[RMDB]
RNA sequence: GGGAACGACUCGAGUAGAGUCGAAAAAGAUCGAUUACGAUCGAUCAAUGAUGCCCCUCACCCACCUCUGAAGAGCCCAGGUGGGCGAGGGAACGGAGCACGGGAUCACGAGCAGUACGCUGCUCGAAAAAGAACUAGACCUUCGGGUCUAGUUCAAGCUUAAGCUAGCGUUCGCGCUAGCUUAAGCAAAAGAAACAACAACAACAAC
Reactivity to 2A3 in 0.01 (KOAc 150mM, MgCl2 10mM, bicine 150mM(pH8.5), 24C), signal-to-noise 2, nucleotides 027 to 156: a000g000a010u000c000g000a000u040u120a060c210g080a030u000c000g000a010u010c000a000a050u180g050a040u160g050c000c000c000c000u010c000a020c000c000c000a000c010c000u030c050u150g100a150a100g010a020g070c020c070c040a000g000g000u000g000g000g000c000g000a000g000g000g000a000a010c100g060g070a060g030c070a040c110g110g000g000a110u070c070a030c120g000a000g000c000a000g030u060a020c220g060c140u000g000c000u000c000g000a000a010a000a020a000g000a000a000c000u000a000g000a000c000c000u040u130c230g090g000g000u000c000u000a000g000u000u000c000a010a000